[RMDB]
RNA sequence: GGGAACGACUCGAGUAGAGUCGAAAACAUUACGAAUUCAGUCGCAAAUUGUAGAAUUAGCUACUCUACGAUUUAUUGAGCGUUAGUAACGUUGUAAUAUAAUAUAGUCUUUGGAAGGAUUAUAUUGGAGCCGCGGACAAGUUCGCUUGUCCGCGAACCUAUCCGAAAGGUUCGCCUUUCGGAUAGGAAAAGAAACAACAACAACAAC
Reactivity to 2A3 in 0.01 (KOAc 150mM, MgCl2 10mM, bicine 150mM(pH8.5), 24C), signal-to-noise 3, nucleotides 027 to 156: c020a040u110u190a060c080g050a090a140u130u140c090a060g080u090c040g030c120a020a010a010u000u020g000u000a000g000a020a040u050u010a030g010c010u070a040c020u000c000u030a000c000g020a010u010u050u060a080u080u250g040a040g020c000g030u010u070a020g040u060a120a060c050g000u020u030g030u050a180a130u090a100u010a180a010u020a000u010a010g000u000c040u070u100u160g140g040a140a060g040g000a000u020u020a010u010a000u010u020g050g040a070g090c120c000g000c000g010g000a000c000a010a000g010u040u140c160g020c200u020u010g000u000c010c000g000c010g000a000a000